This 177-nucleotide RNA was probed chemically with DMS and 2A3. It was measured as part of the RMDB library M2PK50. 2A3 adducts were read by reverse transcription with SuperScript II with manganese. The DMS profile rests on 1,345 reads. For 2A3, 1,750 sequencing reads were counted.
[RMDB]
RNA sequence: GGGAACGACUCGAGUAGAGUCGAAAACUCGGUUAAUUCGUUAACCGAGACUUCUUAAACAUCUUUUCAACACAUAGAUGGUAAAUAUACAAAGAUGUUCGAAUGCGAUAAACUUCGGUUUAUCGAAUCUACACAUUUCCUUCGGGAAAUGUGUAGAAAAAGAAACAACAACAACAAC
Reactivity to DMS in 0.01 (KOAc 150mM, MgCl2 10mM, bicine 150mM(pH8.5), 24C), signal-to-noise 2, nucleotides 027 to 126: c000u010c010g010g000u000u000a000a030u000u010c100g030u000u000a000a000c000c010g000a000g010a040c090u000u000c020u000u000a090a040a000c000a000u000c000u020u000u000u000c100a130a080c140a070c050a120u050a100g020a170u010g000g010u000a040a060a080u020a110u000a080c150a030a040a020g000a010u010g000u000u010c230g010a090a120u000g010c010g000a010u000a000a000a000c000u000u000c200g000g000u000u000u000a000u000c000g000a070a060
Reactivity to 2A3 in 0.01 (KOAc 150mM, MgCl2 10mM, bicine 150mM(pH8.5), 24C), signal-to-noise 2, nucleotides 027 to 126: c000u010c000g030g010u020u030a000a040u060u080c110g020u040u030a000a000c000c000g000a000g010a000c010u030u030c010u060u100a100a060a000c000a010u020c010u000u050u090u100c090a090a030c020a020c020a190u210a120g120a250u050g030g000u050a060a170a050u190a020u010a060c080a020a020a020g010a020u020g010u040u020c050g140a120a070u200g040c020g000a010u000a000a000a000c000u030u060c160g080g000u020u000u000a010u000c000g010a000a020